The data come from the RNA Mapping Database (RMDB), library M2RFPK. The record gives the reactivity of an RNA of 207 nucleotides to 2A3 and DMS. The 2A3 profile rests on 1,906 reads. Reactivities are given for positions 27 through 156.
RNA sequence: GGGAACGACUCGAGUAGAGUCGAAAAGAAAGAAAGAAAUGAGUUUUCUGCGACUGACGGAUUAUUGCAGAGCACAGCAAGGGAACAGAAAAACUCUUUUUCAGCCGACCGUCUGGGCACACCUGAAUCACGACCGGAAGCUUCGGCUUCCGGUCAAGAUACAAUCUUAGUUCGCUAAGAUUGUAUCAAAAGAAACAACAACAACAAC
Reactivity to 2A3 in 0.01 (KOAc 150mM, MgCl2 10mM, bicine 150mM(pH8.5), 24C), signal-to-noise 3, nucleotides 027 to 156: g030a010a030a000g050a020a110a000g030a030a060a030u120g010a050g020u030u020u000u020c000u010g030c030g050a050c050u070g020a020c060g060g030a060u060u100a050u050u280g040c020a040g020a050g140c050a040c040a110g040c020a030a060g020g010g040a040a020c000a040g060a040a040a010a010a030c000u020c000u070u050u010u030u050c030a010g020c000c010g020a040c010c040g030u010c020u030g010g020g000c020a010c000a000c040c020u050g050a060a070u170c050a050c140g010a000c020c010g000g000a000a000g000c020u020u060c150g080g000c000u000u020c040c010g000g010u000c000a000a000
Reactivity to DMS in 0.01 (KOAc 150mM, MgCl2 10mM, bicine 150mM(pH8.5), 24C), signal-to-noise 2, nucleotides 027 to 156: g000a100a110a100g030a150a090a170g000a010a070a020u020g000a060g010u000u000u010u010c000u000g010c050g000a300c030u000g020a110c050g030g030a180u010u010a140u010u000g030c040a150g000a150g050c080a100c090a090g010c030a060a240g000g030g000a170a050c040a080g000a030a020a040a020a040c020u000c000u000u000u000u000u000c020a120g010c010c040g010a110c010c020g010u020c050u000g020g000g000c030a090c020a090c050c040u010g020a050a140u010c090a120c100g000a030c000c010g010g010a030a010g010c000u000u010c300g040g010c020u000u000c010c000g040g020u010c000a000a000